[RMDB]
Conditions: 150 mM KOAc, 10 mM MgCl2 and 150 mM bicine (pH 8.5), 24 C. The record gives the reactivity of an RNA of 177 nucleotides to DMS and 2A3. It was measured as part of the RMDB library M2PK50. For DMS the reverse transcriptase was MarathonRT. 2A3 adducts were read by reverse transcription with SuperScript II with manganese.
RNA sequence: GGGAACGACUCGAGUAGAGUCGAAAAGCGGGUAACUUCGGUUACCCGCAAAGACGCGUCACGUCGCGUCGCCGUCGCGUCGCGGCGCGUCGCGUCGCGAGAAAAGGACGAAGUUCGCUUCGUCCAAGAAUGUGAUCGGGUUCGCCCGAUCACAUUCAAAAGAAACAACAACAACAAC
Reactivity to DMS in 0.01 (KOAc 150mM, MgCl2 10mM, bicine 150mM(pH8.5), 24C), signal-to-noise 1, nucleotides 027 to 126: g000c000g020g000g020u000a010a020c000u010u010c180g030g040u000u000a000c000c000c000g030c010a000a040a040g000a010c000g000c000g000u000c030a040c020g020u000c000g010c000g000u000c000g030c030c300g010u000c120g000c020g020u000c010g000c010g030g000c020g000c030g000u000c020g000c010g010u000c030g030c150g010a160g020a090a070a130a090g010g000a010c000g000a030a010g010u000u000c250g000c030u010u000c000g020u000c000c010a040a030
Reactivity to 2A3 in 0.01 (KOAc 150mM, MgCl2 10mM, bicine 150mM(pH8.5), 24C), signal-to-noise 1, nucleotides 027 to 126: g000c000g000g000g000u010a000a000c000u050u140c240g000g010u030u020a010c000c000c030g000c000a000a000a000g000a000c000g020c000g010u000c000a000c020g020u020c000g000c010g020u020c010g000c020c080g300u180c250g000c000g000u010c000g000c000g000g080c020g000c000g000u000c000g000c010g000u000c000g000c040g020a220g040a010a150a010a020g020g010a010c000g020a000a000g030u020u120c190g070c140u000u000c000g000u000c000c010a000a010